Conditions: 150 mM KOAc, 10 mM MgCl2 and 150 mM bicine (pH 8.5), 24 C.
An RNA of 177 nucleotides, treated with DMS and read out base by base.
It was measured as part of the RMDB library M2PK90.
DMS adducts were read by reverse transcription with MarathonRT.

[RMDB]
RNA sequence: GGGAACGACUCGAGUAGAGUCGAAAAUAAUAUGCAUAUCGAGUUCCCAUGUAUUUUCGUAGCGCUGCGGCUGUAACAUUACAGCUUAGUAAGAAUGCUACCUAACGAUAGCUAGCCGCAGGAUUAAUUCCAGCCUAUACUUCGGUAUAGGCUGGAAAAAAGAAACAACAACAACAAC
Reactivity to DMS in 0.01 (KOAc 150mM, MgCl2 10mM, bicine 150mM(pH8.5), 24C), signal-to-noise 1, nucleotides 027 to 126: u020a070a170u000a070u010g030c060a060u000a060u020c040g000a180g010u000u000c000c030c000a110u000g010u020a050u000u000u000u030c030g010u010a070g000c100g060c030u020g000c000g040g020c010u000g010u000a150a100c180a190u010u010a000c090a070g000c140u010u020a080g000u010a020a030g000a080a100u020g000c030u070a020c070c030u000a080a070c200g000a050u000a000g000c000u000a060g000c000c050g000c090a010g000g000a070u020u010a050a140